[RMDB]
RNA sequence: GGGAACGACUCGAGUAGAGUCGAAAACCCCCUCUCUUCUGUUCAUUUCUUGCUUUUUUUUUUUUUGAGUUUUGCAUUAGGUGAACAAAUGAAUUCCAGUGAGGAAAACAGAAGGCCAUGCAGUUCCCCCUAUACCAUCGUUCGCGAUGGUAUAGGGAAAAGAAACAACAACAACAAC
Reactivity to 2A3 in 0.01 (KOAc 150mM, MgCl2 10mM, bicine 150mM(pH8.5), 24C), signal-to-noise 3, nucleotides 027 to 126: c000c010c000c010c010u050c000u010c020u050u000c020u010g030u040u010c060a100u090u010u000c010u000u000g020c010u020u050u010u060u010u020u030u040u010u010u000u040u090g140a170g070u080u080u080u100g030c010a070u060u230a110g140g040u070g020a030a000c020a030a030a020u040g030a010a020u130u070c040c010a000g030u020g080a060g000g030a040a020a010a040c000a000g020a030a020g020g040c080c050a050u080g040c010a070g020u030u030c000c010
An RNA of 177 nucleotides, treated with 2A3 and read out base by base. The data come from the RNA Mapping Database (RMDB), library OK1LIB. Conditions: 150 mM KOAc, 10 mM MgCl2 and 150 mM bicine (pH 8.5), 24 C.